[RMDB]
RNA sequence: GGGAACGACUCGAGUAGAGUCGAAAACUGGGCUCGACCUCAAGGGUGAUGGUCUUGCCCGUGAGGGUCUUCACAAAGAUCUGCAUCUCUGUGUCUGCAGCUCGGCUGCCUCGCUGAAGAAAAAGAGCGGGUACAUCUUAUUCGUAAGAUGUACCCGAAAAGAAACAACAACAACAAC
Reactivity to DMS in 0.01 (KOAc 150mM, MgCl2 10mM, bicine 150mM(pH8.5), 24C), signal-to-noise 4, nucleotides 027 to 126: c070u010g020g000g020c010u000c120g000a020c000c010u010c030a110a180g000g010g010u000g000a040u020g020g000u010c040u000u000g000c010c000c000g020u000g010a090g010g010g030u000c040u010u000c150a070c200a080a060a050g000a030u000c050u010g010c070a090u000c020u010c040u010g020u010g000u000c060u010g030c050a040g000c040u010c100g000g010c030u000g010c020c050u000c070g000c030u000g000a080a070g000a050a030a070a120a090g010a110g010
Reactivity to 2A3 in 0.01 (KOAc 150mM, MgCl2 10mM, bicine 150mM(pH8.5), 24C), signal-to-noise 3, nucleotides 027 to 126: c010u020g000g020g000c000u000c020g010a000c010c010u030c070a110a090g300g040g120u170g040a070u180g000g030u000c000u000u020g000c000c000c000g000u030g020a050g040g010g000u010c030u060u060c070a040c030a080a100a000g020a020u020c060u090g020c050a080u020c040u020c020u080g060u040g070u060c030u050g000c030a020g010c030u060c110g130g000c030u060g010c010c000u040c030g010c030u080g050a120a080g030a100a110a040a020a000g120a020g060

Record summary:
Chemical mapping of a 177-nucleotide RNA with DMS and 2A3. The 2A3 profile rests on 4,669 reads. The reactions ran in a buffer of 150 mM KOAc, 10 mM MgCl2 and 150 mM bicine (pH 8.5), at 24 C.